[RMDB]
RNA sequence: GGGAACGACUCGAGUAGAGUCGAAAAUACGCUCCUUUGCGUGUUUUAGUCUGGCAUAGAGAAAUUCAUUUAGACGUGUGAUUUCUCUAUGCUUUUAUUAUAUCAAAAACAAGGAGUUCGCUCCUUGCAACUAUGCAAAGUUCGCUUUGCAUAGUUGAAAAGAAACAACAACAACAAC
Reactivity to 2A3 in 0.01 (KOAc 150mM, MgCl2 10mM, bicine 150mM(pH8.5), 24C), signal-to-noise 2, nucleotides 027 to 126: u010a010c010g000c020u090c030c180u170u180u180g000c000g000u010g010u000u010u010u030a050g000u010c140u100g040g000c000a010u010a000g000a000g010a000a020a030u070u020c000a020u040u080u150a190g040a190c070g020u050g010u050g020a000u000u020u010c010u000c000u000a000u000g000c010u000u010u000u000a000u010u030a010u020a000u030c030a020a050a000a070a090c010a010a000g010g000a010g020u050u130c170g070c080u000c010c000u000u050g000
Reactivity to DMS in 0.01 (KOAc 150mM, MgCl2 10mM, bicine 150mM(pH8.5), 24C), signal-to-noise 4, nucleotides 027 to 126: u000a000c020g010c000u030c300c290u000u000u010g010c010g020u000g030u000u000u000u000a130g010u010c130u010g000g010c000a010u000a010g010a000g010a010a010a010u000u000c000a010u000u000u010a170g010a170c270g010u000g010u010g010a020u000u000u000c000u000c000u000a000u000g000c000u000u000u010u020a050u010u020a120u020a120u020c050a040a090a070a090a270c010a020a010g010g000a010g020u000u010c280g000c020u000c000c000u000u000g010